[RMDB]
The data come from the RNA Mapping Database (RMDB), library TTRDES. An RNA of 177 nucleotides, treated with DMS and 2A3 and read out base by base. The 2A3 profile rests on 17,842 reads. For DMS the reverse transcriptase was MarathonRT.
RNA sequence: GGGAACGACUCGAGUAGAGUCGAAAAGAUAUGGAUUAAUUAUGGGAGCUACUUGUCGGAAACGACAAUUAGCAUCGAUCAUACUGUUAAUCCUAAGUCAAAACCUCAGUCCUUCGGGACUGAGGAACACUUUCGUAUAGUUCGCUAUACGAAAGUGAAAAGAAACAACAACAACAAC
Reactivity to DMS in 0.01 (KOAc 150mM, MgCl2 10mM, bicine 150mM(pH8.5), 24C), signal-to-noise 6, nucleotides 027 to 126: g010a010u000a110u020g000g000a010u000u000a020a030u000u000a020u000g010g010g020a190g020c000u000a000c210u000u000g000u000c000g030g000a040a020a050c000g000a010c000a010a000u000u000a010g020c000a220u000c300g010a100u000c020a020u000a010c300u000g000u000u000a000a010u000c000c000u000a020a150g000u000c010a090a080a130a200c000c000u000c000a010g000u000c000c010u000u020c290g030g010g010a000c000u000g010a000g000g000a030a070
Reactivity to 2A3 in 0.01 (KOAc 150mM, MgCl2 10mM, bicine 150mM(pH8.5), 24C), signal-to-noise 5, nucleotides 027 to 126: g000a000u020a020u100g010g000a000u020u040a060a030u060u130a110u070g120g040g100a160g020c000u000a000c010u010u000g000u010c000g020g000a030a020a020c010g000a000c000a010a010u000u000a010g000c020a020u290c030g030a100u070c010a000u020a070c120u090g020u130u050a010a000u000c000c000u000a040a000g020u000c010a030a020a100a300c000c000u000c000a010g000u000c010c010u090u270c300g140g000g000a000c000u000g000a000g000g000a000a010